An RNA of 207 nucleotides, treated with 2A3 and DMS and read out base by base. The RNA was probed in 150 mM KOAc, 10 mM MgCl2 and 150 mM bicine (pH 8.5) at 24 C.

RNA sequence: GGGAACGACUCGAGUAGAGUCGAAAAAAAGACGCGGUUGCCGAUCGGUAUGGAUGCCACCGUGACGGCUCAAUCACACAAGUGCCAACGAUAACGAGGCGCUAGCUAUUGCUGCGUAACUGACGGCUAGAUACAGCCAGGUUCGCCUGGCUGUAAACACAAAAAUUUACUUCGGUAAAUUUUUGUGAAAAGAAACAACAACAACAAC
Reactivity to 2A3 in 0.01 (KOAc 150mM, MgCl2 10mM, bicine 150mM(pH8.5), 24C), signal-to-noise 3, nucleotides 027 to 156: a000a000a000g070a000c020g010c010g010g000u050u040g030c010c000g040a080u070c030g000g060u130a090u160g120g040a040u080g060c010c070a000c000c000g000u020g070a080c040g040g020c010u000c040a050a070u120c030a030c010a000c020a130a060g040u030g050c010c010a100a040c060g070a120u110a180a040c050g020a060g030g000c010g020c040u030a010g000c020u060a070u260u300g020c010u020g020c010g010u020a120a050c040u030g070a050c000g020g010c010u040a040g010a080u060a040c000a000g000c010c000a000g020g010u020u020c090g060c030c000u000g000g000c000u000g000u000a000a010a000
Reactivity to DMS in 0.01 (KOAc 150mM, MgCl2 10mM, bicine 150mM(pH8.5), 24C), signal-to-noise 2, nucleotides 027 to 156: a040a070a140g000a060c020g030c010g000g040u000u010g070c020c010g010a120u000c010g010g040u000a070u000g000g000a120u030g000c030c030a090c040c000g010u000g030a230c120g010g000c030u000c050a050a100u020c050a080c050a060c080a080a070g020u000g000c010c000a050a160c040g000a140u000a080a080c040g000a230g000g020c010g030c010u000a050g020c050u000a000u000u020g010c040u000g000c020g020u010a080a110c030u000g010a110c080g000g000c030u000a110g040a300u000a030c010a000g050c000c010a020g000g040u010u000c300g030c010c000u000g000g020c010u000g000u000a000a050a130